This 207-nucleotide RNA was probed chemically with 2A3. Values cover nucleotides 27 to 156. Source: RMDB library M2RFPK, as collected in RNAgym.
[RMDB]
RNA sequence: GGGAACGACUCGAGUAGAGUCGAAAACGUUGUCAUCGACAACACCCUAUGCAUUCAUGCUCUGUAAGGAUGCACCGAAAGGUGAGCAAGCCCGAGUUGCCCAGACCUGAAAUGCAACACUUUAGAGAAAACCCGAAGCAGUUCGCUGCUUCGGGAAGUGAGAGAACUACUUCGGUAGUUCUCUCACAAAAGAAACAACAACAACAAC
Reactivity to 2A3 in 0.01 (KOAc 150mM, MgCl2 10mM, bicine 150mM(pH8.5), 24C), signal-to-noise 1, nucleotides 027 to 156: c080g000u000u010g000u010c060a220u180c300g040a040c000a000a010c000a040c000c000c010u020a040u000g060c000a010u000u040c010a050u160g050c040u040c000u060g010u030a060a050g060g000a050u020g000c010a010c010c000g040a080a020a020g020g020u040g010a010g000c000a000a040g050c020c000c010g100a050g110u000u080g080c030c010c010a060g060a110c020c020u050g010a120a010a090u070g000c010a000a070c020a010c030u250u180u190a140g010a000g000a120a080a040a000c000c000c000g000a000a000g000c000a000g040u060u090c220g020c170u000g000c000u000u020c000g000g000g000a000a000
Record summary
Values are in units of 0.01, from 0 to 300, in steps of 10. The reactions ran in a buffer of 150 mM KOAc, 10 mM MgCl2 and 150 mM bicine (pH 8.5), at 24 C.